[RMDB]
RNA sequence: GGGAACGACUCGAGUAGAGUCGAAAAACAUCAUCGUGCAUAAAGGAGAUGCAGCUGAUGCAAGUCAAUACACAGUGAGAAGACUCUAUGCAUGCCUUGCUCAAGAAGCAUUGGAUAGGUAUGACAAGAUCAAAUAGGAUUUCGAUCCUAUUUGAUCAAAAGAAACAACAACAACAAC
Reactivity to 2A3 in 0.01 (KOAc 150mM, MgCl2 10mM, bicine 150mM(pH8.5), 24C), signal-to-noise 9, nucleotides 027 to 126: a000c030a020u070c010a020u040c040g170u020g010c010a020u080a090a220a080g190g040a210g030a040u040g000c010a010g000c020u040g010a050u030g020c050a060a040g060u090c050a060a020u140a130c090a010c030a070g110u080g140a080g060a140a030g060a070c010u000c010u080a070u110g020c000a000u020g000c000c010u020u050g010c010u020c070a070a170g130a120a020g090c040a070u060u140g020g010a060u100a100g050g010u070a030u050g040a080c030a060a080
Reactivity to DMS in 0.01 (KOAc 150mM, MgCl2 10mM, bicine 150mM(pH8.5), 24C), signal-to-noise 7, nucleotides 027 to 126: a140c050a040u010c020a030u020c040g010u000g000c020a010u000a050a110a120g010g010a140g020a050u020g010c020a110g000c060u010g000a070u010g020c100a080a070g000u010c100a090a050u030a170c080a040c090a050g010u010g000a110g000a150a100g000a070c040u010c040u000a040u010g000c040a030u010g000c050c010u000u000g000c040u000c070a080a090g000a120a050g020c020a050u020u020g010g000a100u020a040g000g010u000a030u020g000a080c150a090a080